[RMDB]
RNA sequence: GGGAACGACUCGAGUAGAGUCGAAAACCAGUUUCGACUGGAAAACUCCGUAGGGUCCGAUAAGUACGGCCAACGUUGAAAUUCACUUCGAAAGAGGUGAAUGGAGUUGGAAGUACUUUUGACGGACCCUAAACGGGUCGGAUGCGUUCGCGCAUAAUAUAGUGUAACUGUUCGCAGUUACACUAUAAAAAGAAACAACAACAACAAC
Reactivity to 2A3 in 0.01 (KOAc 150mM, MgCl2 10mM, bicine 150mM(pH8.5), 24C), signal-to-noise 4, nucleotides 027 to 156: c010c010a010g000u060u090u070c160g080a040c020u050g020g050a090a090a060a050c070u080c070c010g020u020a030g000g000g000u000c000c000g010a030u010a060a000g000u000a000c000g010g000c000c010a000a000c020g140u170u050g030a020a000a000u000u000c000a000c000u000u010c000g050a070a080a070g000a020g010g010u000g000a000a000u000g010g010a020g010u000u000g000g000a000a030g000u000a000c010u010u030u020u100g120a060c020g010g000a000c010c000c000u000a010a010a000c000g000g000g040u080c050g070g030a040u020g010c020g020u030u050c300g000c010g020c140a020u060a190a050
Reactivity to DMS in 0.01 (KOAc 150mM, MgCl2 10mM, bicine 150mM(pH8.5), 24C), signal-to-noise 4, nucleotides 027 to 156: c010c010a110g010u000u000u000c150g030a120c010u020g010g010a090a090a080a070c020u010c000c020g010u000a050g020g010g030u000c000c010g010a170u000a030a030g010u000a010c010g010g040c000c010a010a010c000g010u000u000g010a140a160a040u000u000c000a010c010u000u000c000g010a160a160a290g000a030g010g020u000g000a010a000u000g000g000a170g030u000u000g010g000a030a050g020u000a000c010u000u000u000u000g020a250c120g020g000a010c000c000c010u000a000a010a050c040g010g020g020u000c010g010g010a170u000g010c020g020u000u010c180g040c040g020c020a050u000a100a260